RNA sequence: GGGAACGACUCGAGUAGAGUCGAAAAUGUACAGAUGCCGCUGGAGGAAAGGUCCCUGACAAACUUACCAUUAAACCUAUUGUUCCGAAUAUUGUCUCACCUGGAUAUGAAUGAUUUACAAAACAUACCAGGACUCAUUAUUCGUAAUGAGUCCUGGAAAAGAAACAACAACAACAAC
Reactivity to 2A3 in 0.01 (KOAc 150mM, MgCl2 10mM, bicine 150mM(pH8.5), 24C), signal-to-noise 1, nucleotides 027 to 126: u040g000u000a030c000a030g050a060u030g000c030c030g030c040u000g070g000a030g040g000a110a000a000g020g000u000c000c000c000u000g030a050c060a000a150a000c010u080u070a030c000c000a090u040u170a070a070a050c020c010u010a040u140u150g020u090u040c020c040g040a020a020u080a100u110u140g070u040c010u010c030a070c020c010u010g040g020a070u070a040u110g080a130a050u080g000a110u090u070u100a050c070a030a120a060a000c030a010u160a160
Reactivity to DMS in 0.01 (KOAc 150mM, MgCl2 10mM, bicine 150mM(pH8.5), 24C), signal-to-noise 1, nucleotides 027 to 126: u010g040u000a130c140a040g000a050u000g020c020c060g010c000u010g010g010a040g000g000a100a070a100g010g010u000c030c010c030u000g010a100c140a060a090a050c050u000u000a050c100c030a080u000u000a080a080a070c090c050u000a070u000u000g010u000u000c090c030g000a100a020u010a070u000u000g000u010c020u000c030a070c030c030u030g000g000a060u000a020u000g010a180a070u010g010a080u000u000u010a050c160a140a090a150a080c140a070u010a030